[RMDB]
RNA sequence: GGGAACGACUCGAGUAGAGUCGAAAAUUGAAAUAAUAAAAGGUUCGAGCAGGUUAACAAGCAUUAAUACUAAAUGUGUUUCAUCGUCUACUUAUUGCUAAACAAAUUGAUUGUUCAUCAAAUUUGCCUCUUCCUAUAGGUUCGCCUAUAGGAAGAGAAAAGAAACAACAACAACAAC
Reactivity to DMS in 0.01 (KOAc 150mM, MgCl2 10mM, bicine 150mM(pH8.5), 24C), signal-to-noise 2, nucleotides 027 to 126: u010u000g000a050a050a100u010a060a100u000a050a080a080a080g020g010u000u000c040g020a030g020c030a040g000g020u000u010a070a040c070a070a070g000c040a020u000u010a030a070u000a070c130u000a050a070a050u010g020u000g000u000u000u000c120a130u010c120g010u000c080u000a030c060u010u010a070u020u010g000c040u000a090a060a130c010a000a010a080u000u000g000a000u000u010g000u000u010c130a070u000c050a010a060a110u000u000u000g000c130
Reactivity to 2A3 in 0.01 (KOAc 150mM, MgCl2 10mM, bicine 150mM(pH8.5), 24C), signal-to-noise 3, nucleotides 027 to 126: u040u060g040a040a000a010u130a030a030u070a060a170a020a040g060g010u060u100c020g020a010g010c030a020g020g060u050u030a030a040c020a140a000g000c000a010u060u110a120a090u100a150c070u070a060a080a170u060g040u010g000u030u040u040c070a110u030c020g060u010c030u030a050c000u100u080a080u120u130g000c040u070a030a030a090c040a010a050a050u010u000g030a040u050u040g050u120u090c030a040u020c020a060a110a130u060u020u010g020c000
The record gives the reactivity of an RNA of 177 nucleotides to DMS and 2A3. The data come from the RNA Mapping Database (RMDB), library RFMREP. The RNA was probed in 150 mM KOAc, 10 mM MgCl2 and 150 mM bicine (pH 8.5) at 24 C.